Chemical mapping of a 177-nucleotide RNA with 2A3 and DMS. Source: RMDB library OK1LIB, as collected in RNAgym. The 2A3 profile rests on 2,627 reads.
RNA sequence: GGGAACGACUCGAGUAGAGUCGAAAACUAGUUCAGAAGGCUGAGAUAGACGGUUUGAUUCACCUAAUUUAUGAUUUCAAGAAUGCACAGUAUCUCCAAGUGUGGGACUGUUCUGCCCAGAAAGCAGUCCCAGUCCUCAAUUCGUUGAGGACUGGGAAAAAGAAACAACAACAACAAC
Reactivity to 2A3 in 0.01 (KOAc 150mM, MgCl2 10mM, bicine 150mM(pH8.5), 24C), signal-to-noise 5, nucleotides 027 to 126: c020u010a050g060u020u020c040a050g010a140a050g200g000c020u040g020a000g010a080u130a040g130a060c060g010g050u020u140u110g070a060u040u030c030a080c020c030u050a110a190u010u110u120a120u170g250a160u050u090u000c010a030a040g090a080a110u130g070c030a020c020a030g040u070a080u050c040u010c010c030a160a180g080u120g010u200g150g000g000a000c000u010g010u020u020c090u050g000c010c010c020a030g100a070a050a010g020c000a010g010
Reactivity to DMS in 0.01 (KOAc 150mM, MgCl2 10mM, bicine 150mM(pH8.5), 24C), signal-to-noise 3, nucleotides 027 to 126: c040u030a080g010u010u010c050a090g000a120a130g030g040c050u040g000a070g000a060u000a050g000a090c100g000g020u000u010u000g010a040u020u020c050a070c120c080u020a040a050u030u000u030a040u050g000a090u000u010u010c080a050a070g000a100a060u000g030c040a050c080a100g000u000a040u030c050u020c020c080a040a100g030u020g030u000g000g000g010a030c040u000g000u000u000c060u000g010c050c000c050a160g010a080a080a090g020c030a010g000

Notes:
The DMS profile rests on 5,055 reads.